[RMDB]
RNA sequence: GGGAACGACUCGAGUAGAGUCGAAAAACUAGUAUGUACAGGGGUAAGUUGACCUGUCAUCUAGACAACUUACCAGGUACUCAAAGGUAAGUUGCUUGAGUACCACAGAGUACGAACUAAGUACUCAGACUAUGCAUGCCUUCGGGUAUGUAUAGUCAAAAGAAACAACAACAACAAC
Reactivity to 2A3 in 0.01 (KOAc 150mM, MgCl2 10mM, bicine 150mM(pH8.5), 24C), signal-to-noise 8, nucleotides 027 to 126: a000c000u010a000g040u130a030u030g030u050a010c000a010g020g010g020g050u120a100a080g050u100u090g100a080c000c000u000g010u000c000a010u000c000u010a000g010a050c020a020a010c010u030u050a030c000c000a030g000g030u020a010c000u010c040a060a040a000g050g020u080a030a070g080u060u070g010c000u010u020g010a000g010u010a010c000c010a020c040a020g000a000g000u000a000c000g050a140a040c040u100a090a060g000u000a000c000u000c000a000
Reactivity to DMS in 0.01 (KOAc 150mM, MgCl2 10mM, bicine 150mM(pH8.5), 24C), signal-to-noise 9, nucleotides 027 to 126: a080c010u000a000g010u030a020u010g000u030a010c010a040g000g010g000g010u020a040a070g010u010u010g000a080c020c010u000g000u010c090a050u020c060u010a010g000a150c040a020a030c040u010u010a020c010c010a130g000g010u010a030c060u010c060a030a060a060g000g000u020a070a080g010u010u010g010c020u000u000g000a050g000u000a040c000c010a220c210a080g000a040g010u000a000c000g000a100a110c140u030a060a100g000u000a010c000u000c010a130
The record gives the reactivity of an RNA of 177 nucleotides to 2A3 and DMS. The data come from the RNA Mapping Database (RMDB), library OK1LIB. The reactions ran in a buffer of 150 mM KOAc, 10 mM MgCl2 and 150 mM bicine (pH 8.5), at 24 C.